[RMDB]
RNA sequence: GGGAACGACUCGAGUAGAGUCGAAAAUCAGAAUCAGGCCGGAGUGUUUAGCGCUCCGUAAACACGGUCGUACAUCCAGCCGGUAGCCCGGUUCCUUGCAUUGAGUGAUGUACGGAGUUUAUAGAGCAAAAGAAAGACCUGUUCGCAGGUCUUUCAACAACCUAAACCAGUUCGCUGGUUUAGGUUGAAAAGAAACAACAACAACAAC
Reactivity to DMS in 0.01 (KOAc 150mM, MgCl2 10mM, bicine 150mM(pH8.5), 24C), signal-to-noise 2, nucleotides 027 to 156: u020c040a130g010a120a140u010c020a080g030g020c010c030g010g010a130g030u000g010u020u000u000a140g000c170g000c000u010c010c020g000u000a010a010a020c030a110c070g030g030u000c010g010u000a000c010a040u010c000c010a230g020c000c010g000g030u000a170g030c300c010c000g000g030u000u010c010c000u000u020g000c110a180u000u000g010a160g020u010g000a030u000g030u010a010c020g020g010a130g000u000u000u000a060u000a080g000a070g000c010a060a040a100a160g000a020a020a040g010a030c000c000u000g030u000u010c290g010c050a000g020g030u000c000u000u000u000c000a120a140
Reactivity to 2A3 in 0.01 (KOAc 150mM, MgCl2 10mM, bicine 150mM(pH8.5), 24C), signal-to-noise 3, nucleotides 027 to 156: u070c010a010g110a050a050u070c050a040g010g090c020c030g040g010a050g030u100g050u090u120u200a130g060c080g010c020u010c000c000g010u010a000a010a000c050a020c060g090g130u100c010g010u000a010c000a010u010c020c020a000g020c020c000g030g030u100a050g040c030c000c010g010g030u100u110c050c000u100u130g050c050a120u090u230g070a030g060u190g010a010u010g000u000a000c010g000g000a040g020u050u070u020a100u060a030g050a010g050c050a020a030a040a090g000a000a000a000g000a000c020c000u000g000u040u050c170g000c040a000g020g000u000c000u000u000u000c000a000a000

Chemical mapping of a 207-nucleotide RNA with DMS and 2A3. The 2A3 profile rests on 1,303 reads. 2A3 adducts were read by reverse transcription with SuperScript II with manganese. It was measured as part of the RMDB library M2RFOK. Values cover nucleotides 27 to 156. DMS adducts were read by reverse transcription with MarathonRT.